[RMDB]
RNA sequence: GGGAACGACUCGAGUAGAGUCGAAAAUACCGAGAACCUUGCUCGGUAUAACAAGGUAACCCUUGGAAACAAGGGAACUGUACCUUCGGGUAUAGAAAAGAAACAACAACAACAAC
Reactivity to 2A3 in 0.01 (KOAc 150mM, MgCl2 10mM, bicine 150mM(pH8.5), 24C), signal-to-noise 7, nucleotides 027 to 095: u070a010c000c000g000a000g010a020a090c040c070u070u120g020c000u010c000g000g020u020a010u010a010a000c000a020a010g040g010u030a060a070c000c000c000u010u010g040g030a060a040a010c000a000a000g010g000g010a010a010c010u010g010u020a010c000c010u010u040c170g050g000g000u010a020u020a020g060a070
Reactivity to DMS in 0.01 (KOAc 150mM, MgCl2 10mM, bicine 150mM(pH8.5), 24C), signal-to-noise 9, nucleotides 027 to 095: u030a090c000c000g000a010g000a100a110c090c090u010u010g010c000u000c000g000g000u000a010u000a050a080c060a040a040g000g010u000a120a120c010c000c000u000u000g000g000a140a110a160c000a010a000g000g000g000a050a050c050u010g010u000a040c020c000u000u040c140g010g010g010u000a030u000a040g000a050

Conditions: 150 mM KOAc, 10 mM MgCl2 and 150 mM bicine (pH 8.5), 24 C. The record gives the reactivity of an RNA of 115 nucleotides to 2A3 and DMS. 2A3 adducts were read by reverse transcription with SuperScript II with manganese. The data come from the RNA Mapping Database (RMDB), library P50LIB. Values are in units of 0.01, from 0 to 300, in steps of 10.